[RMDB]
RNA sequence: GGGAACGACUCGAGUAGAGUCGAAAAGUAGAAUCUGUCAAGCAAAACCCCAAAGCCUUACACUGAGAGCAUUUAGCCUGAUUACUCUUUAAAUCAAAUCAGGCAAUAGAGAGAAACUCGAGAGGUGAAACGGGAGUAAUGUUCGCAUUACUCCCAACUGUAAGUAGUUCUUCGGAACUACUUACAGAAAAGAAACAACAACAACAAC
Reactivity to 2A3 in 0.01 (KOAc 150mM, MgCl2 10mM, bicine 150mM(pH8.5), 24C), signal-to-noise 5, nucleotides 027 to 156: g070u060a030g050a070a090u050c060u110g100u100c060a060a020g030c020a060a080a110a160c020c000c010c010a040a070a020g020c010c020u080u080a040c090a030c080u130g040a020g000a010g070c020a020u050u050u060a040g010c000c000u010g010a010u010u040a060c020u070c070u100u300u180a080a100a070u140c110a010a020a020u000c000a010g000g000c000a000a000u010a000g020a000g000a000g040a070a060a020c020u020c050g040a070g010a020g080g050u040g050a100a060a050c120g000g000g000a000g000u000a000a000u000g020u030u050c130g000c100a000u010u000a000c000u000c000c000c000a000a000
Reactivity to DMS in 0.01 (KOAc 150mM, MgCl2 10mM, bicine 150mM(pH8.5), 24C), signal-to-noise 2, nucleotides 027 to 156: g030u000a080g020a100a090u000c000u000g000u000c060a060a030g020c040a020a050a120a120c050c010c020c040a070a060a150g020c030c010u000u000a070c070a100c100u000g020a080g010a030g030c020a300u000u010u010a090g010c010c010u000g000a060u010u000a100c040u000c030u000u000u000a020a060a070u000c080a040a100a030u000c020a010g010g010c010a040a030u000a060g010a100g000a190g030a170a030a040c030u010c020g000a100g010a090g010g040u000g000a050a070a100c090g010g010g010a020g050u000a010a000u000g020u000u000c300g050c030a010u000u000a010c000u000c000c000c020a000a000